RNA sequence: GGGAACGACUCGAGUAGAGUCGAAAACAUAAAUCAGCGGAACAGGCAGGCUGGUAUGGGCGGUGUGAGCCUGGCCGGUCGCCGGGUCACGCAUCUGCUCAGCGUUGCCGUGGUCGGCGGUGAUCAGUCGUCCAGGACAAUUCGUUGUCCUGGACGAAAAAGAAACAACAACAACAAC
Reactivity to DMS in 0.01 (KOAc 150mM, MgCl2 10mM, bicine 150mM(pH8.5), 24C), signal-to-noise 2, nucleotides 027 to 126: c060a050u020a040a150a080u000c080a040g030c020g030g010a100a070c070a130g000g010c020a050g000g010c010u000g010g030u000a080u000g020g000g020c020g020g000u000g010u010g000a300g020c010c030u000g010g030c010c160g000g020u020c180g000c020c000g010g020g000u000c060a090c030g020c020a030u000c000u010g050c010u000c030a000g010c050g020u000u000g000c000c010g000u010g010g000u000c020g000g020c010g010g010u000g000a060u010c100a080g030
Reactivity to 2A3 in 0.01 (KOAc 150mM, MgCl2 10mM, bicine 150mM(pH8.5), 24C), signal-to-noise 1, nucleotides 027 to 126: c030a030u120a120a130a000u050c030a040g000c050g050g000a070a050c000a030g000g020c030a010g080g040c000u080g000g130u210a210u150g020g040g050c010g000g000u040g000u010g030a000g000c000c000u020g000g050c040c020g130g130u140c070g000c010c000g000g000g000u130c090a070c170g030c000a000u000c060u120g000c020u030c000a000g000c000g110u130u010g000c030c040g130u030g040g060u000c000g050g000c070g000g000u040g020a060u070c020a040g130